Structure probing data (DMS and 2A3) for a 177-nucleotide construct. Source: RMDB library TTRDES, as collected in RNAgym. Values cover nucleotides 27 to 126. DMS adducts were read by reverse transcription with MarathonRT.

RNA sequence: GGGAACGACUCGAGUAGAGUCGAAAAGAUAUGGACACAGGACCAACGCGAAGAACUAGGUCGGAAACGACCUAGGGAGCGUGGUCUGUGUCCUAAGUCAAAAGGGUGCAGCUUCGGCUGCACCCAAGUAACACAACACGUUCGCGUGUUGUGUUACAAAAGAAACAACAACAACAAC
Reactivity to DMS in 0.01 (KOAc 150mM, MgCl2 10mM, bicine 150mM(pH8.5), 24C), signal-to-noise 2, nucleotides 027 to 126: g010a070u000a300u030g000g000a050c000a010c020a000g010g020a040c000c060a110a100c060g020c000g000a130a110g000a170a230c000u000a010g000g000u010c000g000g000a020a080a190c000g020a000c000c000u000a000g000g000g000a100g010c000g040u000g010g010u000c000u000g050u000g000u000c010c000u000a020a100g010u010c050a090a070a150a160g000g020g000u000g020c000a020g010c000u010u010c170g070g010c010u010g000c010a000c000c000c000a010a000
Reactivity to 2A3 in 0.01 (KOAc 150mM, MgCl2 10mM, bicine 150mM(pH8.5), 24C), signal-to-noise 2, nucleotides 027 to 126: g010a020u040a020u090g020g000a010c010a000c000a030g170g250a110c000c030a300a300c180g080c020g290a300a030g040a050a030c000u010a000g020g000u030c030g000g000a060a090a000c010g000a000c140c000u000a000g000g030g010a020g000c000g000u070g010g000u000c000u000g000u020g000u010c000c000u000a010a000g020u010c000a000a040a120a200g000g000g020u010g000c000a000g000c010u060u250c300g200g000c000u000g020c000a010c000c000c000a000a000

The DMS profile rests on 1,557 reads. The RNA was probed in 150 mM KOAc, 10 mM MgCl2 and 150 mM bicine (pH 8.5) at 24 C.